RNA sequence: GGGAACGACUCGAGUAGAGUCGAAAACCUUGUCACAGAGAUCACAAGGGACACGGAGUUGACUUUUGCUCAAGGUGGAACGACAGAGCUGUGUAGGCAAGAUGAGAAAUUGCGAACUUGUUCGGCCACCUUCCCAUUUUUUCGAAAAUGGGAAGGUAAAAGAAACAACAACAACAAC
Reactivity to 2A3 in 0.01 (KOAc 150mM, MgCl2 10mM, bicine 150mM(pH8.5), 24C), signal-to-noise 9, nucleotides 027 to 126: c000c000u010u030g050u010c020a030c040a060g080a040g020a140u070c010a020c020a110a040g060g040g010a010c020a020c090g080g040a080g030u050u060g190a220c060u070u080u120u180g000c010u020c050a030a060g080g000u030g030g030a150a030c030g050a020c040a040g050a010g040c030u020g020u030g030u150a080g020g060c020a010a020g030a110u180g040a040g100a100a110a090u110u120g030c040g020a040a050c040u040u060g010u070u050c010g030g000c020c010
Reactivity to DMS in 0.01 (KOAc 150mM, MgCl2 10mM, bicine 150mM(pH8.5), 24C), signal-to-noise 7, nucleotides 027 to 126: c020c000u000u020g020u010c060a080c090a070g010a080g000a090u010c120a080c090a090a160g000g010g010a230c050a050c050g000g010a110g010u010u010g010a080c120u010u010u020u010g020c050u010c050a070a100g000g010u000g000g010a180a110c070g000a110c170a060g000a030g010c040u000g010u010g010u000a090g000g000c010a050a050g000a070u020g000a160g000a080a080a080u000u000g000c050g010a080a070c120u000u000g010u000u000c040g010g030c210c100

About this RNA: This 177-nucleotide RNA was probed chemically with 2A3 and DMS. For DMS the reverse transcriptase was MarathonRT. The data come from the RNA Mapping Database (RMDB), libraries RFM100 and RFMREP.